[RMDB]
RNA sequence: GGGAACGACUCGAGUAGAGUCGAAAACGGGUAUGCUGAAGUAGAAGAGGAUGAAUCCUCAGAAAUAAUCCGAGAAAGUGCAGAAAUCAGGCACGAAAUGUGUCUAGAGACUCUCUCAACGUUAGCAGUACCACCUUGAAUUCGUUCAAGGUGGUACAAAAGAAACAACAACAACAAC
Reactivity to DMS in 0.01 (KOAc 150mM, MgCl2 10mM, bicine 150mM(pH8.5), 24C), signal-to-noise 3, nucleotides 027 to 126: c090g020g000g040u000a060u010g020c000u010g000a080a110g020u000a080g000a200a120g000a030g010g010a050u020g020a130a150u010c010c020u000c050a050g000a080a120a100u010a120a050u010c060c120g000a050g000a030a050a060g010u010g030c080a120g010a070a110a120u000c050a010g010g000c030a000c020g000a080a130a050u010g020u000g000u000c000u000a070g030a120g010a070c020u010c020u000c020u000c010a070a160c130g020u000u000a040g010c030a140
Reactivity to 2A3 in 0.01 (KOAc 150mM, MgCl2 10mM, bicine 150mM(pH8.5), 24C), signal-to-noise 3, nucleotides 027 to 126: c010g010g010g040u080a040u110g020c040u070g030a070a010g000u090a030g040a210a030g010a010g030g000a010u130g160a120a130u050c010c020u010c000a000g030a000a030a000u150a020a020u040c030c040g010a020g040a050a050a000g060u080g060c030a010g110a040a110a040u090c000a040g000g000c000a010c010g020a090a220a010u240g020u000g020u010c010u050a040g010a020g010a050c010u000c000u000c000u000c000a020a030c070g050u080u070a020g000c030a010

Structure probing data (DMS and 2A3) for a 177-nucleotide construct.
The DMS profile rests on 2,097 reads.
It was measured as part of the RMDB library OK2TRN.
For DMS the reverse transcriptase was MarathonRT.
Conditions: 150 mM KOAc, 10 mM MgCl2 and 150 mM bicine (pH 8.5), 24 C.
The 2A3 profile rests on 2,505 reads.